[RMDB]
RNA sequence: GGGAACGACUCGAGUAGAGUCGAAAAUCGUGCCGUCAUUAAUACGCAGGAUGCAAAUCCCUACUGGCGCCGACGCCACAAUCUUGCGGUUGAAUUGCUCAUUCUCUUCCAACUGGAACGCAUUCACUUCACCCCUAUUGUUCGCAAUAGGGGUGAAAAAAGAAACAACAACAACAAC
Reactivity to DMS in 0.01 (KOAc 150mM, MgCl2 10mM, bicine 150mM(pH8.5), 24C), signal-to-noise 3, nucleotides 027 to 126: u000c050g000u010g010c050c030g000u000c080a100u030u030a110a090u010a040c040g000c030a040g030g000a020u000g020c160a040a120a150u010c010c010c030u040a130c160u000g010g000c040g020c100c060g010a110c060g000c010c020a030c110a060a070u000c050u010u020g010c000g020g010u000u030g020a050a060u000u030g020c030u010c070a100u000u000c040u000c010u000u000c030c040a120a130c110u000g000g000a050a120c090g000c060a090u000u010c050a120c140
Reactivity to 2A3 in 0.01 (KOAc 150mM, MgCl2 10mM, bicine 150mM(pH8.5), 24C), signal-to-noise 5, nucleotides 027 to 126: u100c050g020u040g050c080c030g080u050c030a080u060u220a140a070u130a100c020g000c020a020g010g040a020u020g030c030a070a010a110u030c010c000c000u030a070c030u040g050g010c010g010c040c100g060a080c060g010c010c010a050c040a020a060u040c010u030u100g050c020g050g000u010u100g030a100a040u080u070g020c020u030c040a060u110u010c040u010c000u010u040c000c020a090a090c100u110g020g040a030a020c030g020c080a030u030u040c030a030c040